[RMDB]
Conditions: 150 mM KOAc, 10 mM MgCl2 and 150 mM bicine (pH 8.5), 24 C. This 177-nucleotide RNA was probed chemically with DMS and 2A3. The DMS profile rests on 12,066 reads. The data come from the RNA Mapping Database (RMDB), library M2PK90.
RNA sequence: GGGAACGACUCGAGUAGAGUCGAAAAAAAAAGGAGCUACAGCCGAGCGAGUGACUGAAAACGGCAAAGUCACGAAGCAUCGUUAUACCUAAAUGGUCGUAGCGAAAUAAGAGUUGUUCCCAGUAAAACAUUAGAUAAGGUUCGCCUUAUCUAAUGUAAAAGAAACAACAACAACAAC
Reactivity to DMS in 0.01 (KOAc 150mM, MgCl2 10mM, bicine 150mM(pH8.5), 24C), signal-to-noise 7, nucleotides 027 to 126: a020a030a030a040a090g010g010a210g010c020u000a010c020a120g030c120c020g000a080g010c010g000a280g020u000g010a010c000u000g000a040a030a070a080c130g000g000c070a040a090a020g000u000c000a010c000g010a100a130g000c020a080u000c030g010u000u010a070u010a060c020c020u000a040a060a060u010g010g010u000c080g030u000a030g000c000g000a070a060a050u010a060a180g000a010g010u000u000g010u000u000c000c000c000a130g020u010a040a050a060
Reactivity to 2A3 in 0.01 (KOAc 150mM, MgCl2 10mM, bicine 150mM(pH8.5), 24C), signal-to-noise 7, nucleotides 027 to 126: a000a000a000a000a010g110g000a060g000c020u010a000c010a030g040c040c020g020a010g010c020g010a040g030u010g010a010c010u020g070a080a050a110a110c060g110g010c070a100a100a000g010u010c000a000c020g010a090a000g000c010a110u030c000g020u060u060a070u050a080c020c030u120a190a190a130u240g020g010u040c060g010u020a000g010c000g030a040a040a030u130a060a020g010a000g000u000u000g000u000u000c000c000c010a000g000u020a000a050a000